Conditions: 150 mM KOAc, 10 mM MgCl2 and 150 mM bicine (pH 8.5), 24 C. Structure probing data (2A3 and DMS) for a 207-nucleotide construct.

RNA sequence: GGGAACGACUCGAGUAGAGUCGAAAAUCACUUUGGGACGCUUAGAAUUUGAGCGGCAAAAUUUUGAGGUAAGGAAUUAAAUGACGAACUGGUCGUGGCUCAAUUCAAUAUCAUUGAUGUCGUUUUUAAGAGUGAGUUCGAAUGAGAGUGGUCCUGGCUAGAUUGAGAGCUUCGGUUCUUAGUCUAGAAAAGAAACAACAACAACAAC
Reactivity to 2A3 in 0.01 (KOAc 150mM, MgCl2 10mM, bicine 150mM(pH8.5), 24C), signal-to-noise 3, nucleotides 027 to 156: u030c000a010c010u040u030u030g040g000g020a010c000g000c010u040u080a040g030a100a050u150u110u250g000a000g000c000g060g010c020a030a030a040a050u120u150u070u160g050a060g030g040u120a020a010g030g040a010a030u080u080a110a070a030u070g020a010c030g010a130a020c060u060g030g040u010c020g020u030g040g000c000u010c010a020a000u060u040c020a030a030u040a050u160c060a050u000u110g010a020u050g040u050c020g010u010u020u030u040u080a050a020g010a000g030u030g000a010g010u020u040c010g020a020a020u010g000a000g000a000g020u010g010g000u000c000c010u000g010g000
Reactivity to DMS in 0.01 (KOAc 150mM, MgCl2 10mM, bicine 150mM(pH8.5), 24C), signal-to-noise 4, nucleotides 027 to 156: u010c020a030c040u000u000u000g030g030g060a040c030g020c020u000u000a090g010a200a090u000u010u010g010a040g010c010g030g000c050a060a070a070a120u000u000u000u010g010a090g020g020u010a070a140g010g000a080a120u010u000a050a080a080u000g010a100c040g020a050a110c060u010g040g030u000c090g030u000g020g010c020u000c020a050a060u000u000c040a060a120u010a080u000c050a090u000u000g010a100u000g020u010c020g020u000u000u000u010u020a030a120g010a090g030u000g010a090g030u000u000c050g010a070a070u000g000a180g000a090g020u000g010g010u000c010c010u000g020g000
It was measured as part of the RMDB library OK3TST. 2A3 adducts were read by reverse transcription with SuperScript II with manganese.